The record gives the reactivity of an RNA of 177 nucleotides to DMS and 2A3. Values cover nucleotides 27 to 126. In probing experiments dimethyl sulfate is read out at A N1 and C N3, which are open when not base-paired. For DMS, 4,041 sequencing reads were counted.
RNA sequence: GGGAACGACUCGAGUAGAGUCGAAAAUCACUCGUGCCCAAAAAGGUAUUCUUUGUGUUAUGACAUCUCAGGCACUCUUUGAGUCCUUAGAGUUUACUGAAUUGUCUUUUACUAAUUACAAGCUCCACCUAAAUGAUACGUUCGCGUAUCAUUUAGGAAAAGAAACAACAACAACAAC
Reactivity to DMS in 0.01 (KOAc 150mM, MgCl2 10mM, bicine 150mM(pH8.5), 24C), signal-to-noise 4, nucleotides 027 to 126: u010c040a090c080u010c040g010u010g000c000c010c030a070a060a090a120a070g010g000u010a050u000u000c060u000u000u010g020u000g020u000u010a040u010g000a020c010a020u000c090u000c000a020g010g010c300a050c010u000c010u000u010u000g000a230g010u010c140c060u000u000a020g000a030g010u000u000u010a130c020u000g000a010a040u010u000g010u000c000u000u000u000u000a070c150u000a030a040u000u010a060c070a040a050g010c140u000c020c040a150
Reactivity to 2A3 in 0.01 (KOAc 150mM, MgCl2 10mM, bicine 150mM(pH8.5), 24C), signal-to-noise 4, nucleotides 027 to 126: u040c020a030c040u050c040g050u060g010c020c010c010a040a030a010a010a030g130g000u100a100u120u040c030u020u070u060g050u020g020u050u060a060u100g010a010c010a070u020c030u000c090a010g010g000c060a010c020u000c040u020u040u070g070a120g130u110c030c000u010u000a000g000a010g030u030u070u120a100c000u010g000a030a020u050u010g000u020c000u020u110u010u050a040c020u030a050a100u120u110a040c020a050a010g020c010u020c010c020a060